[RMDB]
RNA sequence: GGGAACGACUCGAGUAGAGUCGAAAAAGAAUUCAAAUAAUGCUAUCUCUAAAUUAGCUAGUAUAGAAUUACUUAGAGCAAAUAUGAUGACUACAAAUGGAGGAGGAUUAUCUUCUUCGCAGCAAAACAAAGUCAGUUGAUUCGUCAACUGACUUUGAAAAGAAACAACAACAACAAC
Reactivity to 2A3 in 0.01 (KOAc 150mM, MgCl2 10mM, bicine 150mM(pH8.5), 24C), signal-to-noise 4, nucleotides 027 to 126: a000g070a030a020u040u010c080a080a050a180u180a150a030u160g000c010u000a020u020c010u000c050u200a130a180a200u190u080a040g010c000u000a020g030u040a040u030a070g040a020a030u090u010a140c030u040u040a000g020a010g120c090a030a210a020u200a070u150g200a120u110g050a070c020u070a080c130a080a140a050u130g010g000a000g000g000a010g020g010a090u140u190a120u240c000u000u010c000u000u010c010g000c030a030g060c020a000a000a000a100
Reactivity to DMS in 0.01 (KOAc 150mM, MgCl2 10mM, bicine 150mM(pH8.5), 24C), signal-to-noise 3, nucleotides 027 to 126: a100g000a070a030u000u000c020a070a040a120u010a180a090u020g020c040u000a050u010c050u040c180u040a090a050a080u030u020a040g020c020u000a080g000u010a040u000a140g030a020a050u000u010a080c020u000u010a050g000a170g010c070a050a050a130u040a020u030g010a060u020g000a140c040u000a100c110a020a080a110u040g000g010a010g010g020a020g000g000a240u070u070a050u010c010u000u000c000u000u000c000g050c120a080g000c170a020a050a070a140
Chemical mapping of a 177-nucleotide RNA with 2A3 and DMS. For DMS, 3,413 sequencing reads were counted. 2A3 adducts were read by reverse transcription with SuperScript II with manganese. Conditions: 150 mM KOAc, 10 mM MgCl2 and 150 mM bicine (pH 8.5), 24 C. DMS adducts were read by reverse transcription with MarathonRT.